[RMDB]
RNA sequence: GGGAACGACUCGAGUAGAGUCGAAAAGGGUAGACGUCAAUGAACUAAUGGCUCGAGCUCAAAUCAGAGCUGCGUUCGCAGCUACCACCUAUGGUGAUGAGGAGGAAGAAGAAGAAGCUAUCGGAAAAUGGCUAUGACAGUUCGCUGUCAUAGCCAUAAAAGAAACAACAACAACAAC
Reactivity to DMS in 0.01 (KOAc 150mM, MgCl2 10mM, bicine 150mM(pH8.5), 24C), signal-to-noise 1, nucleotides 027 to 126: g000g000g010u010a080g000a070c090g000u000c160a070a160u000g010a080a050c040u030a080a140u000g000g010c010u000c000g010a100g000c100u000c090a040a080a130u000c070a070g000a020g040c000u000g030c140g000u030u010c160g000c050a100g010c010u000a100c030c000a100c010c000u010a110u010g030g010u010g060a080u000g000a040g010g000a070g010g010a090a040g050a000a090g000a070a050g010a070a030g040c120u010a100u000c050g000g030a070a050a110